[RMDB]
RNA sequence: GGGAACGACUCGAGUAGAGUCGAAAAGUUUGGUACGAAUGUAUAAUUUGUUAGCAUGCCUUUGGCUUUUACGCAAGUUUUAUCAGCAUGUAAUCAAUGGUUGCAAAGAUACGGCAUGCUUGCUCUGCGACAGCGUCAACUUCGGUUGACGCUGUCGAAAAGAAACAACAACAACAAC
Reactivity to DMS in 0.01 (KOAc 150mM, MgCl2 10mM, bicine 150mM(pH8.5), 24C), signal-to-noise 1, nucleotides 027 to 126: g050u000u000u000g020g010u000a040c020g000a050a030u010g010u020a060u000a050a070u000u000u000g000u000u010a030g020c010a070u010g010c030c000u000u000u000g000g040c010u010u000u010u010a080c210g030c230a110a100g010u000u000u000u020a070u000c080a060g000c120a070u000g020u010a080a040u000c050a060a210u020g020g020u000u000g010c030a010a100a180g010a080u000a090c210g010g010c020a010u000g000c010u010u010g010c010u000c100u010g000
An RNA of 177 nucleotides, treated with DMS and read out base by base. It was measured as part of the RMDB library 15KREP. The RNA was probed in 150 mM KOAc, 10 mM MgCl2 and 150 mM bicine (pH 8.5) at 24 C.